[RMDB]
RNA sequence: GGGAACGACUCGAGUAGAGUCGAAAAUGGCGGGGGCGAAACAGGAUCGACAAGGGUGUAAAGAUCGCUCUUUUACUCAGCAUGAUACCACCGUUAUCGGGUCAACAGAGUAGUUGCAAAUGACAACAAAAGAAUCGCGCGUUCGCGCGCGAUUCAAUCAUUAAUCUGGGUUCGCCCAGAUUAAUGAAAAAGAAACAACAACAACAAC
Reactivity to 2A3 in 0.01 (KOAc 150mM, MgCl2 10mM, bicine 150mM(pH8.5), 24C), signal-to-noise 3, nucleotides 027 to 156: u130g040g020c020g020g000g000g000g000c040g030a010a020a010c040a010g050g030a080u080c020g030a030c070a050a050g030g020g010u050g030u110a090a140a010g060a030u090c050g040c040u040c000u010u120u000u010a030c030u010c040a020g000c030a050u050g030a020u110a140c000c050a020c010c070g030u060u020a080u110c030g010g000g030u050c010a020a030c050a080g040a010g040u060a010g000u010u040g000c030a050a090a110u150g010a100c040a050a000c000a010a230a000a080g000a000a000u000c000g000c000g000c010g050u060u070c220g000c000g030c020g020c020g060a000u000u000c000a000a000
Reactivity to DMS in 0.01 (KOAc 150mM, MgCl2 10mM, bicine 150mM(pH8.5), 24C), signal-to-noise 2, nucleotides 027 to 156: u000g010g020c060g010g010g030g010g030c020g030a060a080a090c090a110g050g020a090u000c030g000a070c070a060a090g000g050g040u000g020u000a060a100a120g000a090u010c060g040c080u000c040u010u000u000u010a080c030u000c020a080g060c030a100u000g030a100u000a090c020c020a140c020c020g000u000u000a050u000c020g010g030g000u000c030a060a100c050a140g000a130g020u000a190g020u030u000g000c000a100a060a130u010g000a050c020a030a090c010a020a040a000a100g020a010a010u010c000g030c010g050c010g110u010u000c300g060c020g030c030g030c000g010a000u000u000c000a050a130

Chemical mapping of a 207-nucleotide RNA with 2A3 and DMS. For DMS, 3,844 sequencing reads were counted. The 2A3 profile rests on 1,635 reads. The reactions ran in a buffer of 150 mM KOAc, 10 mM MgCl2 and 150 mM bicine (pH 8.5), at 24 C. It was measured as part of the RMDB library M2RFPK.